[RMDB]
RNA sequence: GGGAACGACUCGAGUAGAGUCGAAAAGAUAUGGAUCCGGGCUCAUCGAUCUUGUUGGCAUUACGUAACAUCAUUCGGAAACGAAUGUGGUAAUGCCAACAAGGGAGAGCGAUUCGGAUCCUAAGUCGCUAAUAGCAAGCUUCGGCUUGCUAUUAGCAAAAGAAACAACAACAACAAC
Reactivity to DMS in 0.01 (KOAc 150mM, MgCl2 10mM, bicine 150mM(pH8.5), 24C), signal-to-noise 1, nucleotides 027 to 126: g010a100u010a300u030g010g000a000u010c000c010g010g000g000c060u000c020a150u000c120g000a260u000c000u000u000g000u000u010g000g010c000a010u010u000a010c020g000u000a050a170c200a030u000c010a000u000u000c000g030g000a140a130a280c020g020a010a010u000g050u010g030g010u000a000a010u000g010c020c000a000a010c010a000a000g000g000g010a270g010a000g000c120g010a070u000u020c040g000g000a030u010c000c000u000a040a120g000u000c150
Reactivity to 2A3 in 0.01 (KOAc 150mM, MgCl2 10mM, bicine 150mM(pH8.5), 24C), signal-to-noise 2, nucleotides 027 to 126: g040a110u150a090u300g030g000a000u050c010c010g030g040g000c060u060c130a230u300c200g010a030u010c010u020u010g000u010u010g000g000c020a010u000u040a010c050g040u140a170a140c060a270u300c000a000u050u040c030g050g010a030a050a000c010g010a000a020u010g010u010g000g030u000a010a000u000g000c020c000a000a000c000a000a000g020g020g030a020g000a010g060c040g030a070u150u130c030g000g050a000u000c010c000u000a010a010g060u060c160
Notes: This 177-nucleotide RNA was probed chemically with DMS and 2A3. Conditions: 150 mM KOAc, 10 mM MgCl2 and 150 mM bicine (pH 8.5), 24 C. 2A3 adducts were read by reverse transcription with SuperScript II with manganese.